[RMDB]
RNA sequence: GGGAACGACUCGAGUAGAGUCGAAAACUGGGGCUUUCCGGCUGCGGCAAGACCACGACGCUGCGCCUGCUGGCCGGUCUGGAACAUCCGACUUCGGGGCGCAUUCUCAUCGGUGGCAAGGAUGUGACGCAUGAUAUUACUUCGGUAAUAUCAUGCGAAAAGAAACAACAACAACAAC
Reactivity to 2A3 in 0.01 (KOAc 150mM, MgCl2 10mM, bicine 150mM(pH8.5), 24C), signal-to-noise 1, nucleotides 027 to 126: c020u020g000g010g000g040c030u010u060u060c030c000g040g000c050u090g010c030g030g000c030a050a020g030a080c000c010a080c130g070a030c090g020c080u060g000c020g000c020c010u020g010c060u070g030g000c010c040g020g000u030c040u040g030g030a070a020c030a040u040c000c010g030a050c040u100u070c100g030g000g030g000c010g000c080a040u110u040c070u040c020a110u070c040g070g000u050g030g000c030a040a030g070g000a030u060g020u050g080a020
Reactivity to DMS in 0.01 (KOAc 150mM, MgCl2 10mM, bicine 150mM(pH8.5), 24C), signal-to-noise 4, nucleotides 027 to 126: c070u000g010g000g010g010c080u000u000u000c020c030g010g000c050u010g020c090g010g010c040a090a090g000a130c030c060a100c100g010a110c140g010c110u000g000c080g020c020c010u010g020c070u010g000g020c040c040g000g000u010c050u010g020g010a090a080c090a100u010c020c010g000a070c090u000u000c120g010g000g010g000c020g000c030a050u010u010c070u000c070a100u000c040g000g020u000g010g010c060a090a130g000g000a070u000g000u000g010a200